[RMDB]
RNA sequence: GGGAACGACUCGAGUAGAGUCGAAAACAUGCAUUAUCUUUGGGAGCUGGAAGGCUAAGACUUGGCUCCGAAUGCCGGGCACGUCGUCUGGCCUUCGGUUACAUUUAUUGCAUAAAGCCCAGCCAAACCAUACUGCGGGUUUCGACCCGCAGUAUGGAAAAGAAACAACAACAACAAC
Reactivity to 2A3 in 0.01 (KOAc 150mM, MgCl2 10mM, bicine 150mM(pH8.5), 24C), signal-to-noise 3, nucleotides 027 to 126: c080a010u010g030c000a010u050u050a080u190c060u070u150u120g080g110g050a030g050c030u130g100g090a050a000g000g030c010u130a190a020g030a020c030u150u210g030g000c070u020c070c020g040a160a070u200g180c140c020g000g010g000c060a050c230g100u050c010g000u030c030u010g000g010c000c030u000u000c000g010g000u000u020a000c010a030u040u000u020a030u040u040g000c020a000u040a080a120a040g010c000c000c010a000g020c030c040a080a120a100

This 177-nucleotide RNA was probed chemically with 2A3. Conditions: 150 mM KOAc, 10 mM MgCl2 and 150 mM bicine (pH 8.5), 24 C. The 2A3 profile rests on 1,547 reads. 2A3 adducts were read by reverse transcription with SuperScript II with manganese. Source: RMDB library OK1LIB, as collected in RNAgym.